This 177-nucleotide RNA was probed chemically with 2A3 and DMS. For DMS the reverse transcriptase was MarathonRT. The reactions ran in a buffer of 150 mM KOAc, 10 mM MgCl2 and 150 mM bicine (pH 8.5), at 24 C. Reactivities are given for positions 27 through 126.
[RMDB]
RNA sequence: GGGAACGACUCGAGUAGAGUCGAAAAUGGAGGACCGAACCAGUUCUGAUGUGCAAAUCGUUUGGAUGACUUGGGUAUAGGGGUUAAAGGCUAAUCUAGAGUGGCAAUAGCGGGUUCCCCCCAAUACGGUCUGUUAAUGUUUCGACAUUAACAGACCAAAAGAAACAACAACAACAAC
Reactivity to 2A3 in 0.01 (KOAc 150mM, MgCl2 10mM, bicine 150mM(pH8.5), 24C), signal-to-noise 4, nucleotides 027 to 126: u140g040g000a060g030g030a030c020c010g000a050a050c000c010a020g020u060u000c040u050g070a100u060g040u040g040c070a030a060a140u050c040g060u040u050u070g110g000a060u060g020a050c030u070u070g030g000g000u080a070u090a100g000g030g000g000u010u070a090a060a030g080g000c040u050a030a010u060c020u090a070g010a040g160u070g010g050c020a050a120u080a110g050c040g020g000g000u010u040c010c000c010c000c000c010a050a020u150a120c090
Reactivity to DMS in 0.01 (KOAc 150mM, MgCl2 10mM, bicine 150mM(pH8.5), 24C), signal-to-noise 4, nucleotides 027 to 126: u010g000g010a070g010g010a080c050c020g020a070a080c040c070a060g010u010u020c050u030g000a050u020g010u000g030c120a060a080a080u000c070g010u010u010u010g020g000a100u010g010a090c060u030u020g010g010g000u000a110u020a070g020g000g000g000u000u010a070a050a110g020g010c040u000a030a060u030c100u040a100g000a090g010u010g010g020c030a070a070u010a060g000c040g010g000g000u000u000c000c000c010c010c030c060a050a070u010a120c140